RNA sequence: GGGAACGACUCGAGUAGAGUCGAAAAUCAGCUGGGGCCCAGGUCAUUCUGAUUUCCUGAGUGCUCUUCAAAGGAAUCCAGAAAUGAAAAUAUCAACUAGCAACAUUAACGAUAAAGCCCAUCUCCUGUGGCAACAAGCUUGCUGAGGAACCUGUUAAUCGUACCUAUACUUCGGUAUAGGUACGAUAAAAGAAACAACAACAACAAC
Reactivity to 2A3 in 0.01 (KOAc 150mM, MgCl2 10mM, bicine 150mM(pH8.5), 24C), signal-to-noise 2, nucleotides 027 to 156: u020c000a000g030c130u070g010g030g030g000c030c000c000a010g000g050u050c000a020u010u030c080u060g030a040u000u090u200c000c030u090g000a090g020u180g090c060u080c040u300u000c040a100a090a040g030g010a010a000u010c180c120a040g030a060a070a000u020g040a030a030a030a080u120a030u060c020a060a030c130u100a050g100c000a020a120c060a130u100u210a100a090c120g050a030u120a150a120a000g030c010c010c010a150u030c060u060c020c010u130g040u300g130g030c000a020a040c030a100a000g080c060u010u030g010c000u000g010a000g010g010a000a010c010c010u080g060u090u100a040
Chemical mapping of a 207-nucleotide RNA with 2A3. It was measured as part of the RMDB library OK3TST. 2A3 adducts were read by reverse transcription with SuperScript II with manganese. As a SHAPE reagent, 2A3 marks flexible, mostly unpaired nucleotides at the ribose 2'-OH.